Conditions: 150 mM KOAc, 10 mM MgCl2 and 150 mM bicine (pH 8.5), 24 C. Chemical mapping of a 177-nucleotide RNA with 2A3 and DMS.
[RMDB]
RNA sequence: GGGAACGACUCGAGUAGAGUCGAAAAGUACGCCCCGAACUGCACCAUCAUAGGCUUGUCCUCCGCCGAUCCCUCUUCAAGAAGGGUCUCCGGGUUUGGCACCACUUCCGUCACAAUUGCAGACAGGCGAGGUAUGAGGUUUCGACCUCAUACCUCGAAAAGAAACAACAACAACAAC
Reactivity to 2A3 in 0.01 (KOAc 150mM, MgCl2 10mM, bicine 150mM(pH8.5), 24C), signal-to-noise 1, nucleotides 027 to 126: g070u050a040c080g060c030c010c010c010g060a060a040c030u060g000c030a040c000c010a030u080c040a040u120a080g070g000c020u020u080g070u060c000c000u000c010c010g000c010c000g010a060u070c010c030c010u030c010u190u050c070a110a060g110a020a080g050g040g000u000c010u000c000c010g000g000g120u050u080u050g090g000c000a020c020c000a040c020u050u000c060c010g040u060c030a000c020a160a160u140u130g000c020a010g000a110c050a030g090g080
Reactivity to DMS in 0.01 (KOAc 150mM, MgCl2 10mM, bicine 150mM(pH8.5), 24C), signal-to-noise 2, nucleotides 027 to 126: g020u000a080c250g010c060c010c000c070g000a050a100c060u000g030c030a080c090c030a050u000c060a110u010a110g000g030c060u010u000g000u000c030c070u000c030c040g030c040c000g010a040u000c010c010c020u030c010u010u010c230a040a120g040a060a020g020g000g000u000c050u000c200c030g000g020g010u000u010u000g000g000c090a060c030c030a080c060u000u040c040c060g020u000c040a070c110a080a130u000u000g010c060a060g000a070c160a030g000g010